[RMDB]
RNA sequence: GGGAACGACUCGAGUAGAGUCGAAAAAUGCUGCUAUUACAGAUUAUAAUUACUAUUCUUAUAAUCUGCCUACUAUGUGUGACAUCAAACAAAUGUUGUUCUGCAUGGAAGUUGUAAACAAGUACUUACGGGUUAGGGUUCGCCCUAACCAAAAGAAACAACAACAACAAC
Reactivity to DMS in 0.01 (KOAc 150mM, MgCl2 10mM, bicine 150mM(pH8.5), 24C), signal-to-noise 6, nucleotides 027 to 129: a100u030g020c130u030g010c150u040a000u060u050a290c040a000g000a040u010u030a000u040a050a050u020u020a180c190u030a170u120u070c080u080u000a070u030a060a000u020c010u040g020c100c090u020a160c160u030a030u000g050u000g020u040g020a000c030a050u040c070a040a100a140c220a100a090a140u010g000u020u020g010u020u030c010u040g030c020a110u030g050g020a080a080g020u040u110g050u060a070a040a080c210a090a080g000u080a080c070u040u050a050c140g030
Reactivity to 2A3 in 0.01 (KOAc 150mM, MgCl2 10mM, bicine 150mM(pH8.5), 24C), signal-to-noise 5, nucleotides 027 to 129: a000u100g020c030u010g010c030u060a030u120u180a170c010a040g010a000u020u000a000u000a050a030u130u120a070c110u180a140u300u150c030u000u010a000u010a000a000u000c000u020g040c040c010u100a100c020u020a000u010g000u000g060u040g020a040c010a030u020c020a000a100a180c030a050a180a060u210g000u060u000g000u020u010c010u030g020c000a020u010g040g000a050a040g050u030u010g030u130a070a140a030c060a060a040g080u120a110c010u100u080a080c170g110
Structure probing data (DMS and 2A3) for a 170-nucleotide construct. Source: RMDB library 15KLIB, as collected in RNAgym. Reactivities are rounded to 0.1 and cut off at 0 and 3. The reactions ran in a buffer of 150 mM KOAc, 10 mM MgCl2 and 150 mM bicine (pH 8.5), at 24 C. Values cover nucleotides 27 to 129.